[RMDB]
RNA sequence: GGGAACGACUCGAGUAGAGUCGAAAAGAAAGGUUAAUGCAGCCCGGCAUUAACCGAAACGGGCGAAAAGAAAGAAAGAAAGCAUGUCGCAGGCCCGUGACAUGCGAAAAGGGCCGAAAGAAAGAAAGGUUAAGAGAUUCUUCGGAAUCUCUUAACCAAAAGAAACAACAACAACAAC
Reactivity to 2A3 in 0.01 (KOAc 150mM, MgCl2 10mM, bicine 150mM(pH8.5), 24C), signal-to-noise 3, nucleotides 027 to 126: g080a020a080a000g000g000u000u000a020a000u000g030c010a030g050c000c000c000g000g000c010a010u020u000a000a000c000c020g010a050a040a000c020g010g040g030c130g100a070a060a040a070g280a030a050a050g110a020a160a010g140a020a130a000g000c000a000u000g010u000c000g060c080a060g080g140c000c000c000g000u000g000a000c000a000u000g000c020g040a080a060a010a050g020g000g000c020c010g200a220a130a070g030a030a070a010g100a020a080a000
Reactivity to DMS in 0.01 (KOAc 150mM, MgCl2 10mM, bicine 150mM(pH8.5), 24C), signal-to-noise 2, nucleotides 027 to 126: g010a120a140a110g010g000u040u010a000a000u000g000c000a090g010c020c050c030g000g000c000a010u000u000a000a000c000c000g010a010a100a080c040g000g000g020c000g000a090a080a100a120g000a090a120a070g010a150a190a060g000a110a110a070g010c040a000u010g000u000c000g000c060a080g010g000c030c030c010g000u000g000a000c000a020u000g040c000g000a050a010a090a080g030g010g000c000c120g000a050a110a070g000a130a090a120g010a080a140a080